Source information:
The record gives the reactivity of an RNA of 177 nucleotides to DMS and 2A3.
RNA sequence: GGGAACGACUCGAGUAGAGUCGAAAAGAUAUGGACGGUCUAGGAGUCUUUGAUCUCGGAAACGAGGGAGACUCCCUAGAGCCGUCCUAAGUCAAAAGGAUGAAUUGUGUUCGCACAAUUCAUCCAACUAGUGUAAUCACUUCGGUGAUUACACUAGAAAAGAAACAACAACAACAAC
Reactivity to DMS in 0.01 (KOAc 150mM, MgCl2 10mM, bicine 150mM(pH8.5), 24C), signal-to-noise 3, nucleotides 027 to 126: g000a010u010a300u010g000g010a010c000g020g030u000c000u000a010g000g000a060g000u000c000u000u010u000g010a050u010c000u010c010g000g000a140a110a240c010g000a010g010g000g000a020g000a000c000u000c150c060c030u000a010g000a060g010c000c010g000u010c000c010u000a010a050g000u010c050a070a070a100a100g010g010a020u000g010a020a000u010u010g010u000g010u000u000c240g030c010a010c000a010a000u000u000c000a010u000c000c000a020a040
Reactivity to 2A3 in 0.01 (KOAc 150mM, MgCl2 10mM, bicine 150mM(pH8.5), 24C), signal-to-noise 2, nucleotides 027 to 126: g010a030u100a060u120g000g020a010c010g000g020u000c000u000a010g020g010a020g000u020c010u140u210u120g140a120u050c000u000c000g000g000a060a070a070c000g000a000g000g000g020a000g020a000c010u070c190c000c000u020a010g010a030g040c000c000g000u010c000c000u010a010a000g010u010c030a010a020a040a190g000g000a020u010g000a010a000u000u000g020u010g030u060u080c250g090c100a010c000a010a010u000u010c000a010u000c000c000a000a000
Description
The reactions ran in a buffer of 150 mM KOAc, 10 mM MgCl2 and 150 mM bicine (pH 8.5), at 24 C. For 2A3 the reverse transcriptase was SuperScript II with manganese.